[RMDB]
RNA sequence: GGGAACGACUCGAGUAGAGUCGAAAAUCAUUUGUAAGGCUCAGUCUUGAGAACUGCAAAGGGUUUGGUGAUGUCGCGCCCCUCUCGAACCUUGUUACACUUGAGGAACUGAAUCUCCACUACUGUGAGAGCCCUCCUAUUUCGAUAGGAGGGCUCUAAAAGAAACAACAACAACAAC
Reactivity to 2A3 in 0.01 (KOAc 150mM, MgCl2 10mM, bicine 150mM(pH8.5), 24C), signal-to-noise 1, nucleotides 027 to 126: u090c000a040u060u060u000g070u060a010a050g020g050c070u000c030a010g180u060c150u170u030g000a000g000a020a100c070u030g060c030a000a000a000g050g000g000u000u000u000g110g010u110g070a080u020g020u010c010g000c000g030c000c010c000c000u050c010u040c020g100a070a110c000c000u000u070g010u000u060a020c040a010c040u070u130g000a000g040g100a040a000c010u150g040a020a160u040c020u020c030c000a040c000u120a000c060u110g010u080g280
About this RNA:
Conditions: 150 mM KOAc, 10 mM MgCl2 and 150 mM bicine (pH 8.5), 24 C. The record gives the reactivity of an RNA of 177 nucleotides to 2A3. 2A3 adducts were read by reverse transcription with SuperScript II with manganese.